[RMDB]
RNA sequence: GGGAACGACUCGAGUAGAGUCGAAAAGGCAACCGUCCUUUUGAGUGCAAGAGCGUAAGCGGGCUUGACUGCGAGGCCCACGAGCCGAGCAGGUGCGAAAGCAGGCUCUAGUGAUCCGGCGGCCCCACCCACAGUAAGAGUUCGCUCUUACUGUGGGAAAAGAAACAACAACAACAAC
Reactivity to DMS in 0.01 (KOAc 150mM, MgCl2 10mM, bicine 150mM(pH8.5), 24C), signal-to-noise 4, nucleotides 027 to 126: g020g000c050a120a080c110c110g000u050c020c010u000u000u000u000g020a060g030u010g000c030a060a060g000a120g010c020g000u070a110a140g000c030g020g010g010c020u000u010g000a130c010u000g000c010g020a300g000g000c010c010c150a070c280g000a150g010c000c000g000a300g000c000a020g000g010u000g030c030g000a130a060a100g000c000a080g000g000c000u000c030u000a060g020u020g010a070u010c140c050g010g000c300g000g000c010c010c020c020a190
Reactivity to 2A3 in 0.01 (KOAc 150mM, MgCl2 10mM, bicine 150mM(pH8.5), 24C), signal-to-noise 5, nucleotides 027 to 126: g030g010c020a030a040c020c010g090u110c020c000u060u110u060u100g060a050g010u120g030c040a050a020g000a030g040c050g120u170a090a020g020c030g060g050g020c010u050u080g030a060c000u010g000c000g010a040g010g000c010c020c030a090c140g020a050g000c000c000g000a010g000c010a000g000g030u040g030c050g080a090a020a010g010c020a020g030g000c000u000c000u030a070g020u060g060a040u030c040c010g000g000c010g000g000c010c000c000c020a030